[RMDB]
RNA sequence: GGGAACGACUCGAGUAGAGUCGAAAACGUAGGCGUGUGCAUAGUAAACUGGACAGCUUACGACCUCAGAGAGCCUUGCAAAUUCAUGGCCAUUGUCAGGGGUAAUGGAUUUGAAGUCAUAACUUUUUUGAAGUUCCACCAGCUCAUCAUUGACCGACGACGGUAUCCGAUUCGUCGGAUACCGUCGAAAAGAAACAACAACAACAAC
Reactivity to 2A3 in 0.01 (KOAc 150mM, MgCl2 10mM, bicine 150mM(pH8.5), 24C), signal-to-noise 2, nucleotides 027 to 156: c020g000u020a000g000g050c140g170u070g040u070g060c030a000u130a100g120u290a210a190a120c080u010g020g060a010c000a020g010c000u000u010a000c020g020a040c000c000u060c040a010g050a020g000a030g070c000c010u020u050g110c000a000a030a060u010u010c010a000u010g050g020c010c000a030u130u180g100u160c110a050g120g000g000g000u050a010a000u030g000g000a020u040u010u000g040a090a010g000u000c030a100u050a160a120c050u120u170u080u020u050u130g100a020a020g010u020u050c040c040a040c000c000a020g010c020u000c010a180u000c010a080u030u120g110a110c050c070g020a050

An RNA of 207 nucleotides, treated with 2A3 and read out base by base. The reactions ran in a buffer of 150 mM KOAc, 10 mM MgCl2 and 150 mM bicine (pH 8.5), at 24 C. Reactivities are given for positions 27 through 156.